An RNA of 177 nucleotides, treated with 2A3 and DMS and read out base by base. High 2A3 reactivity points to a flexible backbone, as in loops and unpaired stretches. The DMS profile rests on 13,849 reads.

[RMDB]
RNA sequence: GGGAACGACUCGAGUAGAGUCGAAAAGAUAUGGACGUAGAGCGAUAAGCUACGGUCGGAAACGACCGAAUAGCUUUUGACGCUUCAAGUCCUAAGUCAAAGACAUAAUCCUUCGGGAUUAUGUCAACUUAAGGAGUUAGUUCGCUAACUCCUUAAGAAAAGAAACAACAACAACAAC
Reactivity to 2A3 in 0.01 (KOAc 150mM, MgCl2 10mM, bicine 150mM(pH8.5), 24C), signal-to-noise 6, nucleotides 027 to 126: g020a010u050a020u110g000g000a000c040g060u300a050g000a010g010c030g080a160u050a300a030g000c000u020a020c010g000g000u000c000g000g000a080a040a010c010g000a000c000c010g010a050a080u050a010g000c000u050u060u080u260g170a080c040g000c000u040u020c040a010a000g010u000c000c000u010a040a000g010u010c040a110a090a070g010a000c000a000u010a000a010u010c010c010u030u090c300g130g010g000a000u000u000a000u020g000u000c000a000a000
Reactivity to DMS in 0.01 (KOAc 150mM, MgCl2 10mM, bicine 150mM(pH8.5), 24C), signal-to-noise 8, nucleotides 027 to 126: g000a030u000a180u010g010g010a010c000g000u010a300g000a010g000c010g010a140u010a010a010g020c000u000a060c010g020g010u000c000g010g000a040a050a110c010g010a000c000c000g010a060a080u000a010g010c000u000u000u010u000g020a220c050g010c000u000u000c030a300a300g000u000c000c000u000a020a090g000u010c020a080a110a120g000a010c000a010u000a010a010u000c000c000u000u020c210g030g000g010a010u000u000a000u000g000u000c000a020a060